Structure probing data (DMS and 2A3) for a 177-nucleotide construct. It was measured as part of the RMDB library OK2TST. For 2A3, 1,172 sequencing reads were counted.

[RMDB]
RNA sequence: GGGAACGACUCGAGUAGAGUCGAAAACAUGAUGUCAGCUGAAGUGAUAAGAAGAAAGAAAAAGGGCUCUCCGAAUAGUCAUGAAGGGAUCACCGAGACCUGUACAUGGGCACUAUCCCAACAUUACGCUCAAAUAUUGGUUCGCCAAUAUUUGAGCAAAAGAAACAACAACAACAAC
Reactivity to DMS in 0.01 (KOAc 150mM, MgCl2 10mM, bicine 150mM(pH8.5), 24C), signal-to-noise 2, nucleotides 027 to 126: c140a070u000g010a110u000g020u000c030a100g020c030u010g040a110a110g000u010g020a080u010a040a110g000a120a070g010a070a060a100g000a050a040a060a170a140g000g000g000c070u000c040u000c070c030g000a100a040u030a100g020u000c040a060u010g000a050a070g020g010g000a070u010c080a090c050c080g000a170g000a010c190c010u000g000u000a120c060a040u000g010g000g000c040a040c050u010a060u000c000c000c010a070a060c190a090u010u010a070c280
Reactivity to 2A3 in 0.01 (KOAc 150mM, MgCl2 10mM, bicine 150mM(pH8.5), 24C), signal-to-noise 2, nucleotides 027 to 126: c010a010u050g030a040u090g050u030c020a020g000c040u090g050a120a030g010u000g030a040u060a170a030g070a070a010g060a070a110a020g050a020a080a030a030a020g070g000g030c000u010c020u010c050c020g040a090a160u080a070g020u030c020a060u040g050a030a070g000g000g000a040u070c030a050c060c040g060a060g030a050c010c010u020g000u060a020c010a080u050g000g070g000c050a000c070u050a050u050c030c010c010a000a030c040a040u120u110a020c050